[RMDB]
RNA sequence: GGGAACGACUCGAGUAGAGUCGAAAAGUAGACUUCGGUCUACAAAAAUCCUAAGUCAGAAUGAGGGACUUGACAUGUUGACCUCGGAAACGAGGUACCAACAACAGCAAGUCCUCCCCACCAUUCUGAUAUGGAAAAAAAGUGACUUCGGUCACAAAGGUGGCUCUAUAUUCGUAUAGAGCCACCUAAAAGAAACAACAACAACAAC
Reactivity to 2A3 in 0.01 (KOAc 150mM, MgCl2 10mM, bicine 150mM(pH8.5), 24C), signal-to-noise 1, nucleotides 027 to 156: g000u000a000g000a010c000u060u110c300g060g000u000c000u000a010c000a000a050a000a030a000u020c020c000u040a190a000g040u000c010a000g030a000a000u010g000a070g060g060g000a010c000u020u000g040a110c050a270u030g000u020u000g180a220c010c000u000c010g020g030a040a080a010c000g000a000g000g000u050a060c060c050a040a090c000a040a030c000a020g070c000a000a000g000u000c000c000u050c000c000c010c000a020c010c010a000u050u060c000u000g010a000u020a030u010g000g110a000a000a180a000a000a000a000g080u120g000a010c020u070u080c260g140g000u030c000a000c020a020a070

Description: The record gives the reactivity of an RNA of 207 nucleotides to 2A3. The RNA was probed in 150 mM KOAc, 10 mM MgCl2 and 150 mM bicine (pH 8.5) at 24 C. It was measured as part of the RMDB library RNAMAK.